[RMDB]
RNA sequence: GGGAACGACUCGAGUAGAGUCGAAAAUAAAAUAAAGUUAAUGGUACCUACCUUACAGAACUGACAAGGGUUCAGGACAUUGUUGCUCCUUAAUAAAUGGUAAUUGUGUUAUCACAGAAAGGAAAUAGGAAAACAUUACUGAUUUCUUGUAUAAUUAUGACUAUACCUCAUUCGUGAGGUAUAGUCAAAAAGAAACAACAACAACAAC
Reactivity to DMS in 0.01 (KOAc 150mM, MgCl2 10mM, bicine 150mM(pH8.5), 24C), signal-to-noise 2, nucleotides 027 to 156: u000a060a090a040a090u010a060a070a150g000u000u010a070a050u000g020g010u010a120c050c010u010a060c000c050u000u050a190c010a270g030a120a080c050u020g010a160c070a120a070g000g010g000u000u010c040a030g010g000a150c070a150u000u000g020u000u000g000c030u000c000c040u000u000a090a060u010a040a090a060u000g000g050u000a040a060u000u010g030u000g010u000u000a030u000c010a030c030a170g000a090a030a120g000g000a050a100a120u000a050g000g020a070a050a100a110c090a030u020u000a110c060u000g000a140u000u000u000c010u000u010g030u000a120u000a080a110u000u030a130
Reactivity to 2A3 in 0.01 (KOAc 150mM, MgCl2 10mM, bicine 150mM(pH8.5), 24C), signal-to-noise 1, nucleotides 027 to 156: u150a070a100a040a040u140a140a090a020g050u080u090a010a020u060g050g000u040a060c010c000u020a010c000c000u010u000a090c120a120g020a240a000c020u080g140a060c060a010a080g050g030g000u030u020c000a000g000g080a040c010a100u000u100g040u000u050g000c110u050c020c020u030u060a070a020u110a200a140a040u080g040g000u010a020a010u030u100g020u010g020u140u160a000u170c020a010c040a060g110a030a010a000g100g020a120a030a000u140a070g020g000a000a000a110a000c040a020u130u060a070c000u050g050a110u050u030u070c000u030u040g070u020a050u080a170a100u270u030a040